[RMDB]
RNA sequence: GGGAACGACUCGAGUAGAGUCGAAAAAUAAUGCCGUUUACUUCCGCAGUCGGGCGUGCCCAGGUGAGUUCCAGCACGCUGCGGCCCUUUUCGCCCGCUGGAAUGGAAAGGCCGAUGGGGCCGAGGACAUCACUAUGCCUUUCGAGGCAUAGUGAUGAAAAGAAACAACAACAACAAC
Reactivity to 2A3 in 0.01 (KOAc 150mM, MgCl2 10mM, bicine 150mM(pH8.5), 24C), signal-to-noise 3, nucleotides 027 to 126: a000u200a010a030u090g030c000c010g030u070u120u120a100c050u040u020c010c000g060c090a030g060u210c060g010g010g000c010g020u050g000c000c000c000a050g000g040u050g080a100g040u160u070c030c010a000g010c000a000c040g160c010u050g000c010g020g000c000c010c000u120u080u020u060c010g010c030c000c000g030c020u020g020g070a110a080u160g010g010a070a060a070g020g010c010c010g140a180u160g060g100g040g000c010c010g000a040g040g010a010
Reactivity to DMS in 0.01 (KOAc 150mM, MgCl2 10mM, bicine 150mM(pH8.5), 24C), signal-to-noise 4, nucleotides 027 to 126: a080u010a080a060u010g010c040c010g020u000u010u010a110c150u000u000c030c020g030c070a050g000u000c040g020g000g020c010g010u000g010c000c010c060a060g000g020u000g000a110g010u010u010c040c060a170g000c010a030c030g000c030u010g010c140g020g010c010c240c110u020u000u000u000c060g020c030c000c050g010c030u010g010g000a080a060u010g010g000a050a080a130g000g000c020c040g000a100u000g010g020g010g010c020c010g000a050g000g010a260